[RMDB]
RNA sequence: GGGAACGACUCGAGUAGAGUCGAAAAGAUAUGGAUUGUACAGAGUCGUCCAUCGGAAACGAUGGUCGACGACGAAGUACAGGAGUCCUAAGUCAAAUCAUUAGCACUGUUCGCAGUGCUAAUGAAACAGAUCGCAGAUGUUCGCAUCUGCGAUCUGAAAAGAAACAACAACAACAAC
Reactivity to DMS in 0.01 (KOAc 150mM, MgCl2 10mM, bicine 150mM(pH8.5), 24C), signal-to-noise 1, nucleotides 027 to 126: g040a030u000a090u000g010g010a010u010u000g000u000a020c020a010g000a300g020u000c000g000u000c000c000a020u010c020g000g010a000a010a060c000g000a000u000g020g030u010c020g010a030c000g040a030c200g000a120a210g000u000a000c000a040g050g030a250g050u000c000c000u000a010a100g000u000c050a080a100a080u000c010a000u000u010a000g010c000a000c000u020g000u000u040c160g040c010a010g000u000g000c000u000a010a000u010g010a020a060a130

Structure probing data (DMS) for a 177-nucleotide construct.
The reactions ran in a buffer of 150 mM KOAc, 10 mM MgCl2 and 150 mM bicine (pH 8.5), at 24 C.
It was measured as part of the RMDB library TTRDEL.